[RMDB]
An RNA of 177 nucleotides, treated with 2A3 and DMS and read out base by base.
RNA sequence: GGGAACGACUCGAGUAGAGUCGAAAAGCUUGUCUAACUUGAGUAUAGGGGCGAAAGACUAAUCGAACAACCUAGUAGCUGGUUCCUUCCGAAGUUUCCCUCAGGAUAGCUGGAGCAGUAUUCUAGUGGGUUUAAAAUUUUUCGAAAUUUUAAACCCAAAAGAAACAACAACAACAAC
Reactivity to 2A3 in 0.01 (KOAc 150mM, MgCl2 10mM, bicine 150mM(pH8.5), 24C), signal-to-noise 2, nucleotides 027 to 126: g000c000u020u040g020u040c000u020a080a080c020u020u120g060a040g030u130a030u170a190g070g000g030g000c070g080a010a090a000g050a020c040u090a110a100u180c040g040a050a080c020a030a090c060c000u010a030g010u070a020g040c050u050g030g030u050u000c000c000u030u090c010c020g020a030a020g040u020u030u040c000c020c000u040c030a020g020g090a060u090a100g120c110u120g000g010a030g010c050a050g040u070a090u090u060c000u010a020g020u000
Reactivity to DMS in 0.01 (KOAc 150mM, MgCl2 10mM, bicine 150mM(pH8.5), 24C), signal-to-noise 2, nucleotides 027 to 126: g050c050u000u010g000u020c040u020a060a060c030u000u030g000a060g020u010a160u010a110g020g010g000g000c040g000a060a040a080g020a070c050u020a020a140u050c020g010a140a060c100a060a070c030c020u000a050g000u010a070g020c060u000g000g020u030u000c020c080u010u000c070c030g000a090a050g020u040u020u000c000c000c020u010c090a100g020g000a090u010a040g010c080u000g000g010a030g030c090a110g000u000a040u000u000c000u010a050g040u020
Reactivities are given for positions 27 through 126.